[RMDB]
The record gives the reactivity of an RNA of 207 nucleotides to 2A3.
For 2A3 the reverse transcriptase was SuperScript II with manganese.
The 2A3 profile rests on 708 reads.
Reactivities are rounded to 0.1 and cut off at 0 and 3.
It was measured as part of the RMDB library M2RFPK.

RNA sequence: GGGAACGACUCGAGUAGAGUCGAAAAACUGAUACCUUACGAGGUAUCAGAAUGACUUCGUGGUGGAGCGCCACGAACGGAAAAUAAAGAAAGCUCGAUUGAAACGCACCGUGUACGCACGGUGCGAAAAAGUCGAUCCAGUUCGCUGGAUCGACAACGUACACGUUUUGUUCGCAAAACGUGUACGAAAAGAAACAACAACAACAAC
Reactivity to 2A3 in 0.01 (KOAc 150mM, MgCl2 10mM, bicine 150mM(pH8.5), 24C), signal-to-noise 1, nucleotides 027 to 156: a020c010u000g000a000u000a000c000c010u040u020a010c220g170a000g000g000u000a000u000c000a000g000a000a040u090g050a040c050u010u000c010g000u010g010g000u030g120g040a010g000c000g020c000c000a010c010g010a020a010c010g000g050a080a020a020a040u120a010a070a070g150a030a020a000g030c000u000c010g070a120u100u280g010a090a030a010c020g010c000a000c020c000g020u020g000u050a010c270g010c030a000c010g000g020u000g050c010g000a000a000a000a000a000g000u000c000g000a000u000c000c000a000g000u040u060c120g050c100u000g000g040a000u010c000g010a000c000a010a000